[RMDB]
An RNA of 177 nucleotides, treated with DMS and 2A3 and read out base by base. Conditions: 150 mM KOAc, 10 mM MgCl2 and 150 mM bicine (pH 8.5), 24 C. Reactivities are given for positions 27 through 126.
RNA sequence: GGGAACGACUCGAGUAGAGUCGAAAAUAGCUACAUAUGUUCCAUAACAGACGUCCACUUUUUGAUGAAAAGGUGGACACUACAUCACCAAUACAAGUUUAAUGGCUACAUACGGCACUCAGUUUACAAGUACUAAAAUCUUCGGAUUUUAGUACUUAAAAGAAACAACAACAACAAC
Reactivity to DMS in 0.01 (KOAc 150mM, MgCl2 10mM, bicine 150mM(pH8.5), 24C), signal-to-noise 8, nucleotides 027 to 126: u010a090g000c030u010a090c100a100u010a030u010g000u000u000c020c030a070u010a060a080c130a070g010a140c150g010u000c010c000a010c000u010u000u000u000u000g000a190u020g000a050a000a010a020g000g020u000g010g000a010c000a030c080u010a060c140a050u010c060a090c120c080a060a070u020a080c160a080a090g000u010u000u020a090a040u010g000g010c080u010a030c030a040u000a040c100g010g000c030a100c050u010c050a070g000u000u010u010a060c160
Reactivity to 2A3 in 0.01 (KOAc 150mM, MgCl2 10mM, bicine 150mM(pH8.5), 24C), signal-to-noise 9, nucleotides 027 to 126: u120a010g020c020u050a020c060a100u120a040u050g020u010u030c010c010a010u070a090a050c030a050g130a090c080g010u000c000c000a010c000u020u040u010u050u120g300a300u200g060a030a020a010a000g000g000u000g000g040a000c000a000c000u010a000c000a070u120c040a030c060c020a050a050u140a210c050a120a040g020u020u050u100a160a040u070g030g000c020u030a010c000a030u060a040c040g020g010c020a010c040u080c030a020g010u010u020u060a100c080